[RMDB]
RNA sequence: GGGAACGACUCGAGUAGAGUCGAAAACCGUGACAUUGCGAAAGCAAGGCUGGCGGUAGGUAGUCCUGGGCGGCGACAGCCUUGGACUGCGGCGUAAAGGUGUACCUGGGGCCGGUAAACCUAUCGUGAAAGGCAACUUGGUUCGCCAAGUUGCCAAGAUAGACAGAGUGUUCGCACUCUGUCUAUCAAAAGAAACAACAACAACAAC
Reactivity to DMS in 0.01 (KOAc 150mM, MgCl2 10mM, bicine 150mM(pH8.5), 24C), signal-to-noise 2, nucleotides 027 to 156: c020c010g020u030g030a040c030a050u000u010g020c010g010a200a110a290g000c020a040a030g000g060c030u000g010g060c000g020g020u000a010g020g060u020a050g020u000c000c000u010g020g010g030c010g020g040c080g010a200c170a230g010c010c000u000u010g000g010a000c010u000g030c010g000g020c040g000u030a060a120a080g020g000u000g050u010a060c010c010u000g010g010g010g030c000c000g000g020u000a050a070a080c010c000u000a060u000c040g040u000g000a070a110a140g000g010c000a010a040c000u000u020g010g010u000u000c300g000c010c000a010a060g000u000u010g010c010c000a000a020
Reactivity to 2A3 in 0.01 (KOAc 150mM, MgCl2 10mM, bicine 150mM(pH8.5), 24C), signal-to-noise 4, nucleotides 027 to 156: c010c000g040u100g030a060c120a140u030u060g030c010g070a110a040a040g020c020a030a010g060g050c100u090g060g010c010g000g000u000a000g000g010u020a000g010u000c000c000u000g000g000g000c030g030g040c090g060a050c100a040g010c000c000u000u020g010g000a000c000u020g020c020g000g000c020g020u060a040a050a020g020g000u200g090u290a180c000c000u030g010g000g090g020c000c010g000g030u130a110a080a020c000c000u000a010u010c020g000u040g050a100a060a020g000g010c000a000a000c000u000u000g010g000u030u030c100g000c080c000a000a000g000u000u000g000c000c000a000a000
Structure probing data (DMS and 2A3) for a 207-nucleotide construct. For 2A3, 4,196 sequencing reads were counted.